[RMDB]
The record gives the reactivity of an RNA of 170 nucleotides to DMS and 2A3. The RNA was probed in 150 mM KOAc, 10 mM MgCl2 and 150 mM bicine (pH 8.5) at 24 C. The 2A3 profile rests on 4,097 reads.
RNA sequence: GGGAACGACUCGAGUAGAGUCGAAAAAGCGGAGAAACCACAUCCAGAGGACCCCUUCGACGAACAGAAGACCCUGGACCGGGAGGGAAUAGCCCAUAGUACAAGGGGAGAUGCUAGGAGUCGGGAGAAAUCUGGUCGUUCGCGACCAGAAAAAGAAACAACAACAACAAC
Reactivity to DMS in 0.01 (KOAc 150mM, MgCl2 10mM, bicine 150mM(pH8.5), 24C), signal-to-noise 5, nucleotides 027 to 129: a070g020c070g030g030a090g010a120a120a030c070c000a130c080a130u020c060c010a050g030a070g000g000a190c090c120c050c020u040u020c000g030a120c140g060a090a050c090a060g020a100a030g000a160c150c030c010u050g040g000a000c090c140g040g030g020a020g000g000g120a000a100u010a100g040c010c010c060a120u060a040g020u000a070c010a080a040g010g020g010g000a080g020a040u000g000c050u060a060g080g000a110g010u030c060g030g050g010a050g040a050a140a060
Reactivity to 2A3 in 0.01 (KOAc 150mM, MgCl2 10mM, bicine 150mM(pH8.5), 24C), signal-to-noise 3, nucleotides 027 to 129: a000g030c030g020g030a040g010a090a080a020c050c000a020c050a140u000c020c010a010g010a120g020g000a020c000c010c000c010u060u030c030g190a180c010g010a090a040c020a060g070a090a000g010a080c000c010c000u040g000g000a000c000c000g040g020g050a050g030g040g050a010a050u020a080g030c000c000c000a070u070a070g050u080a050c060a090a030g000g000g020g000a010g020a040u100g020c010u030a030g010g020a050g020u050c000g000g000g010a010g020a010a040a000